RNA sequence: GGGAACGACUCGAGUAGAGUCGAAAAUCAUGUGAUCUAACGUAUCACGACUAAACGUAAGGGUAAAGCGGCUGGCAUGUCGUCCGGGCAUAAAGUCAUAUCGCCUGAACAGAGAACAUGUUACUGAUUGUAAAGUCGGAUUCGUCCGACUUUACAAAAAAGAAACAACAACAACAAC
Reactivity to 2A3 in 0.01 (KOAc 150mM, MgCl2 10mM, bicine 150mM(pH8.5), 24C), signal-to-noise 2, nucleotides 027 to 126: u140c010a010u100g050u020g030a020u000c040u110a050a090c100g120u200a020u050c030a000c020g100a080c100u090a090a080a020c030g130u120a090a070g050g000g070u100a130a050a030g070c050g040g000c000u030g030g010c050a030u000g050u010c000g030u000c020c010g030g000g000c010a000u080a120a110a000g040u090c060a090u060a050u100c060g030c000c030u000g020a030a000c040a050g080a010g010a010a000c030a040u010g000u040u120a000c000u050g040a080
Reactivity to DMS in 0.01 (KOAc 150mM, MgCl2 10mM, bicine 150mM(pH8.5), 24C), signal-to-noise 4, nucleotides 027 to 126: u020c060a100u020g030u000g020a040u000c010u000a060a150c300g030u020a030u000c010a040c030g050a130c170u030a030a070a060c100g030u010a030a150g000g000g020u030a050a090a130g000c030g020g000c050u000g000g010c090a050u000g000u000c030g000u010c060c010g020g010g000c050a000u000a030a060a070g010u010c100a070u000a070u000c190g010c000c020u010g010a090a040c030a090g020a100g000a130a050c090a030u010g000u000u000a070c040u010g000a210

An RNA of 177 nucleotides, treated with 2A3 and DMS and read out base by base. It was measured as part of the RMDB libraries RFM100 and RFMREP.